Conditions: 150 mM KOAc, 10 mM MgCl2 and 150 mM bicine (pH 8.5), 24 C. This 177-nucleotide RNA was probed chemically with DMS and 2A3. DMS adducts were read by reverse transcription with MarathonRT. It was measured as part of the RMDB library M2PK90.

RNA sequence: GGGAACGACUCGAGUAGAGUCGAAAAAACACUGUGUAGCAUAGGUGGGAGGCUUUGAAGUGUGGACGCCAGUCUGCAUGGAGCCGACCUUGAAAUACCACCCUUUAAUGAAGAAAAACAAAGCCAACUCUACGUAAAAGUUCGCUUUUACGUAGAGAAAAGAAACAACAACAACAAC
Reactivity to DMS in 0.01 (KOAc 150mM, MgCl2 10mM, bicine 150mM(pH8.5), 24C), signal-to-noise 6, nucleotides 027 to 126: a050a050c090a040c060u000g010u000g000u000a030g010c050a040u000a040g000g010u000g000g000g010a120g010g010c010u000u000u030g000a090a090g010u000g010u000g010g010a010c010g020c110c230a070g020u000c000u000g010c000a010u000g000g000a020g020c000c010g000a090c190c180u010u000g000a020a030a040u010a070c010c000a020c010c010c030u000u000u000a060a070u010g000a060a080g010a050a050a060a090a050c130a070a060a100g010c060c080a080a150
Reactivity to 2A3 in 0.01 (KOAc 150mM, MgCl2 10mM, bicine 150mM(pH8.5), 24C), signal-to-noise 4, nucleotides 027 to 126: a000a000c080a010c010u070g000u010g000u050a000g020c060a010u010a030g030g010u020g010g030g000a130g000g000c000u300u220u070g040a030a000g010u010g000u000g000g010a000c000g000c030c010a000g000u010c000u010g000c010a010u010g000g010a000g000c000c000g000a020c000c000u020u020g010a020a010a000u020a010c000c010a010c010c000c020u050u100u070a160a110u210g110a080a180g080a090a130a010a010a010c080a080a030a030g030c030c000a020a040